[RMDB]
RNA sequence: GGGAACGACUCGAGUAGAGUCGAAAAUGAAAUAGCGUAAUCGACAUUGAGAAUGUACGCUAAGUGUGUGUUGUAUGGGUAAGGUCCAAUUGUACACACACACAGUUGGACCUAAUGUCGAAAAAAACGUUUAAAAGCGAUUCGUCGCUUUUAAACGAAAAGAAACAACAACAACAAC
Reactivity to 2A3 in 0.01 (KOAc 150mM, MgCl2 10mM, bicine 150mM(pH8.5), 24C), signal-to-noise 1, nucleotides 027 to 126: u170g110a020a000a070u100a000g030c040g040u040a000a040u080c010g050a030c070a100u110u190g040a060g090a130a180u130g010u050a000c060g010c010u000a070a050g040u040g010u010g010u000g060u210u130g020u060a130u160g130g020g000u100a080a100g040g030u020c010c000a050a000u000u020g040u090a010c100a010c010a000c000a000c010a000c040a100g040u070u030g020g000a010c010c000u020a030a030u110g000u000c030g050a080a030a050a010a000a000a000
Reactivity to DMS in 0.01 (KOAc 150mM, MgCl2 10mM, bicine 150mM(pH8.5), 24C), signal-to-noise 2, nucleotides 027 to 126: u010g000a110a100a090u000a030g020c020g020u000a030a100u010c040g010a050c040a080u000u000g000a080g000a070a080u020g000u000a010c030g020c010u000a020a100g000u000g000u000g030u010g000u000u020g020u000a040u020g000g010g000u030a080a080g020g010u000c040c010a060a050u000u000g000u000a100c020a030c110a030c160a040c060a010c010a030g010u010u010g000g020a070c020c000u000a030a040u000g000u010c030g010a000a000a050a030a080a050a150